[RMDB]
The record gives the reactivity of an RNA of 177 nucleotides to 2A3 and DMS. The reactions ran in a buffer of 150 mM KOAc, 10 mM MgCl2 and 150 mM bicine (pH 8.5), at 24 C. It was measured as part of the RMDB library M2PK50.
RNA sequence: GGGAACGACUCGAGUAGAGUCGAAAACCACAUAUCUUCGGAUAUGUGGAAAUAAGGGAAACGGAUUAUUCCGGUCGACUCCCGAGAAACAAAGUCAAAUAAAAAGCAUCUUCUUCGGAAGAUGCAAGUUCAAAUACCUGUUCGCAGGUAUUUGAACAAAAGAAACAACAACAACAAC
Reactivity to 2A3 in 0.01 (KOAc 150mM, MgCl2 10mM, bicine 150mM(pH8.5), 24C), signal-to-noise 2, nucleotides 027 to 126: c010c000a000c000a000u000a000u000c000u020u010c170g110g000a000u000a000u000g000u060g000g010a020a150a010u140a040a060g020g000g040a100a050a010c040g020g010a010u170u030a120u300u080c010c000g010g040u080c040g070a060c020u020c010c000c000g020a030g030a020a190a010c110a060a080a030g100u160c050a100a060a030u200a100a110a050a020a000g010c000a000u020c000u020u000c000u000u050c260g050g000a000a000g000a000u000g000c010a010a000
Reactivity to DMS in 0.01 (KOAc 150mM, MgCl2 10mM, bicine 150mM(pH8.5), 24C), signal-to-noise 2, nucleotides 027 to 126: c010c000a000c000a020u010a010u000c000u000u020c170g020g010a040u000a000u000g010u000g000g000a010a040a080u010a120a080g010g020g010a030a060a160c030g000g000a040u010u010a210u010u000c010c010g010g000u010c070g010a110c070u000c000c000c000g000a150g010a130a100a120c070a010a030a070g020u010c030a070a080a130u020a070a090a070a130a080g000c000a010u000c000u000u000c000u000u000c180g000g020a030a000g000a020u000g000c010a030a020

The 2A3 profile rests on 1,981 reads. 2A3 adducts were read by reverse transcription with SuperScript II with manganese.